[RMDB]
RNA sequence: GGGAACGACUCGAGUAGAGUCGAAAACGUCGAUAUUUUCUUCAGUCGGCACCAUACGGCCGCUCUUUGGAUCGUAUUUGGCAGGAUGGAACUUGCUCGUAAUUUUCUUGAUAUUGGCUCCACCGCGCCUCCAGGUGGGGUUCGCCCCACCUGGAGGAAAAGAAACAACAACAACAAC
Reactivity to 2A3 in 0.01 (KOAc 150mM, MgCl2 10mM, bicine 150mM(pH8.5), 24C), signal-to-noise 2, nucleotides 027 to 126: c040g070u030c000g030a020u040a210u110u070u020u030c060u160u130c030a030g000u020c040g000g070c050a070c060c000a020u090a100c030g030g000c010c000g040c020u070c020u070u130u270g080g000a180u030c040g000u050a080u070u210u190g120g000c010a050g000g070a030u080g030g000a010a040c010u040u040g010c010u030c010g030u130a210a240u000u050u070u030c080u060u090g020a090u040a110u130u080g040g070c020u010c000c000a050c000c010g010c020g000